The record gives the reactivity of an RNA of 177 nucleotides to 2A3. The reactions ran in a buffer of 150 mM KOAc, 10 mM MgCl2 and 150 mM bicine (pH 8.5), at 24 C.
[RMDB]
RNA sequence: GGGAACGACUCGAGUAGAGUCGAAAACUCGCGUCGCUGGAUCUCGUCCUGGUCCGGUGAGGACUUGGCGGCUUUGGCCAGCCGAACGAGUGCAUGGAUAUGCACGGGCUCAAGUUGGGAAAGCGUGGUCGACAAAUGCCUUCGGGCAUUUGUCGACAAAAGAAACAACAACAACAAC
Reactivity to 2A3 in 0.01 (KOAc 150mM, MgCl2 10mM, bicine 150mM(pH8.5), 24C), signal-to-noise 1, nucleotides 027 to 126: c000u000c000g060c040g040u000c000g030c110u030g080g190a200u000c100u060c070g100u300c000c000u070g000g000u000c000c120g000g110u260g150a080g000g000a000c000u090u070g060g000c010g000g000c000u020u000u230g030g000c040c000a070g000c020c000g070a030a270c070g090a060g040u000g000c000a000u080g130g130a000u080a030u270g000c020a000c090g000g000g040c060u020c170a170a090g020u080u000g000g020g020a000a030a070g020c070g020u090g040